[RMDB]
RNA sequence: GGGAACGACUCGAGUAGAGUCGAAAAUGCAUCUGCUUUGUUACCUCUAUACCAUUGUGUAUAGUACCUUACACUGCAUUGUACUAUUAUGCUACAUUCUAUUUUACUAAUGAGCCUGCAUUUAUUACCACUCAUUAAAGUUCGCUUUAAUGAGUGGAAAAGAAACAACAACAACAAC
Reactivity to DMS in 0.01 (KOAc 150mM, MgCl2 10mM, bicine 150mM(pH8.5), 24C), signal-to-noise 5, nucleotides 027 to 126: u000g020c010a040u000c140u010g010c030u000u000u010g000u000u000a090c140c090u000c020u000a010u010a020c010c030a250u010u010g020u000g030u000a000u000a010g010u000a050c120c090u000u010a060c030a050c070u000g000c020a030u000u000g010u000a090c090u000a100u000u010a040u010g010c040u000a060c120a080u000u000c060u010a080u000u000u000u000a060c110u000a030a070u010g000a070g030c050c070u000g000c070a050u000u000u010a050u030u000a150
Reactivity to 2A3 in 0.01 (KOAc 150mM, MgCl2 10mM, bicine 150mM(pH8.5), 24C), signal-to-noise 6, nucleotides 027 to 126: u050g000c000a030u010c040u060g020c010u080u030u050g040u040u040a050c010c020u010c010u020a020u000a020c020c030a240u150u250g050u020g000u130a000u000a010g010u020a030c000c010u020u030a010c030a020c030u020g010c000a030u020u080g030u050a050c030u060a090u240u040a070u110g020c010u020a040c010a040u040u000c010u070a120u070u130u060u050a080c050u060a050a130u050g010a000g030c020c020u020g000c040a040u050u050u010a040u020u050a080